[RMDB]
RNA sequence: GGGAACGACUCGAGUAGAGUCGAAAAGUAGUGGAGAAGAAAGAAGUGGAAACACUUAGCGCACGUCCACUACAACGUGCGCAGUAUUGGAGUGUUUGAGGGAGAACCUCAAGCACUCCAGUACAAACGCCCUCACCACUUUCGAGUGGUGAGGGCGAAAAGAAACAACAACAACAAC
Reactivity to 2A3 in 0.01 (KOAc 150mM, MgCl2 10mM, bicine 150mM(pH8.5), 24C), signal-to-noise 1, nucleotides 027 to 126: g030u040a000g000u050g120g050a210g000a300a000g080a150a040a030g030a010a000g000u000g000g000a090a040a000c080a000c020u050u050a020g020c030g000c060a020c000g010u000c010c020a030c040u010a000c000a010a000c000g000u020g010c000g000c070a020g000u010a030u050u000g010g000a000g000u000g000u000u000u000g000a000g000g050g000a170g070a220a200c000c000u000c000a000a000g000c000a000c000u000c000c000a000g000u050a000c000a000a010a000
The record gives the reactivity of an RNA of 177 nucleotides to 2A3. The data come from the RNA Mapping Database (RMDB), library OK1LIB. For 2A3 the reverse transcriptase was SuperScript II with manganese.